An RNA of 207 nucleotides, treated with 2A3 and DMS and read out base by base. The reactions ran in a buffer of 150 mM KOAc, 10 mM MgCl2 and 150 mM bicine (pH 8.5), at 24 C. For 2A3, 2,426 sequencing reads were counted. Source: RMDB library OK3TST, as collected in RNAgym. The DMS profile rests on 7,301 reads.

RNA sequence: GGGAACGACUCGAGUAGAGUCGAAAAAUUGUUACUUAAAGAAGAAUCAUUUACCAUACAUGGCACACAUUUUCCAGUCCGUAGAAAGGAAUUUAUGACAGUGCUUGCGAAUUUGAAGAGAGUCCUCCUACAAAUCACAUACAGCUUUGGGAUGGAAACUCAGUAAAUGAUUCGUCAUUUACUGAGUAAAAGAAACAACAACAACAAC
Reactivity to 2A3 in 0.01 (KOAc 150mM, MgCl2 10mM, bicine 150mM(pH8.5), 24C), signal-to-noise 4, nucleotides 027 to 156: a000u110u070g020u050u040a110c060u080u130a130a100a080g050a060a020g020a060a080u070c010a050u060u090u150a120c040c020a030u100a110c070a110u110g030g000c010a010c000a000c000a030u080u030u010u000c010c020a030g090u040c060c070g080u050a040g140a100a080a060g030g030a040a030u100u130u070a070u080g050a050c040a060g010u010g020c000u040u040g020c040g040a130a110u100u100u190g060a090a050g080a000g000a000g090u030c010c030u020c000c000u020a060c040a050a070a050u130c020a020c020a090u200a120c050a040g050c020u070u130u120g020g000g020a030u090g070g000a080a020
Reactivity to DMS in 0.01 (KOAc 150mM, MgCl2 10mM, bicine 150mM(pH8.5), 24C), signal-to-noise 4, nucleotides 027 to 156: a070u000u000g010u000u010a110c050u000u000a100a070a210g020a110a090g010a140a100u020c040a120u000u000u010a090c030c040a120u010a070c060a090u000g020g020c020a080c060a070c070a100u020u000u000u010c010c000a190g020u000c060c150g030u000a110g010a090a120a170g010g000a060a040u010u010u000a050u020g000a060c060a070g020u000g000c010u000u000g000c040g020a090a060u000u000u000g020a080a070g030a130g000a120g010u000c050c000u000c000c020u000a110c060a030a030a090u000c040a040c050a100u000a070c010a090g000c070u000u010u010g000g010g030a080u000g000g000a120a070